This 177-nucleotide RNA was probed chemically with DMS and 2A3. For 2A3 the reverse transcriptase was SuperScript II with manganese. DMS adducts were read by reverse transcription with MarathonRT.
[RMDB]
RNA sequence: GGGAACGACUCGAGUAGAGUCGAAAAUCUGCUAGAUGUUCAAAUUUACUCUCUACAGAAGAUUUUAGUUUUUCAGAUUCCUCAAUCAUAGUUACUAUUUUCUGGAAUCUAGUAGUACCAGCUUUUUAAUAUACCAUUAGUUCGCUAAUGGUAUAUUAAAAGAAACAACAACAACAAC
Reactivity to DMS in 0.01 (KOAc 150mM, MgCl2 10mM, bicine 150mM(pH8.5), 24C), signal-to-noise 2, nucleotides 027 to 126: u030c000u020g020c060u000a010g010a010u000g010u040u000c080a040a080a260u020u010u030a040c130u040c100u020c050u020a070c070a100g020a060a020g000a050u020u010u030u020a030g000u020u020u020u000u010c130a060g010a040u010u030c090c060u000c190a080a030u010c050a040u000a050g010u000u000a050c050u000a030u010u000u000u010c050u000g000g010a080a020u000c000u000a000g000u000a000g010u000a300c030c020a150g000c090u020u000u020u010u020
Reactivity to 2A3 in 0.01 (KOAc 150mM, MgCl2 10mM, bicine 150mM(pH8.5), 24C), signal-to-noise 7, nucleotides 027 to 126: u020c000u000g000c000u000a010g010a040u040g120u300u300c050a050a060a110u090u120u160a150c030u110c010u090c120u160a100c050a040g070a120a010g010a080u060u070u060u160a050g020u050u030u020u040u190c090a030g010a040u050u090c020c030u110c150a010a040u030c030a060u040a110g060u090u050a030c010u030a030u030u040u020u010c020u020g020g020a020a020u010c000u000a010g000u010a000g000u000a020c010c000a020g090c010u040u110u010u000u000